[RMDB]
RNA sequence: GGGAACGACUCGAGUAGAGUCGAAAAUCUUUUGCACCGAAGCCUUAGUGUUUCUGUACACUGGGUUACAGCACUGAAACACCAGAAUAGCAGGGUGCUGCAGAGUGGCCAGCAUCUUAGGGUCUGUGAUUUGCUCCUUGUCCACAUUCAAGGUGGCCUGAUCGUACGUUUUCGAACGUACGAUCAGAAAAGAAACAACAACAACAAC
Reactivity to 2A3 in 0.01 (KOAc 150mM, MgCl2 10mM, bicine 150mM(pH8.5), 24C), signal-to-noise 1, nucleotides 027 to 156: u000c000u030u070u040u090g030c010a020c020c030g080a060a080g100c000c040u190u220a060g040u050g010u070u080u000c120u070g080u090a040c010a030c050u060g100g010g040u050u150a010c020a000g020c020a020c030u020g000a090a070a080c030a010c030c040a060g090a300a110u110a120g030c060a050g090g000g090u010g060c050u040g000c030a030g030a040g230u090g020g090c040c000a010g000c000a010u040c000u050u040a010g040g010g040u040c030u070g040u020g030a030u020u030u050g040c030u000c030c000u000u020g020u040c000c040a050c010a080u090u180c050a160a010g110g010u050g000g000c000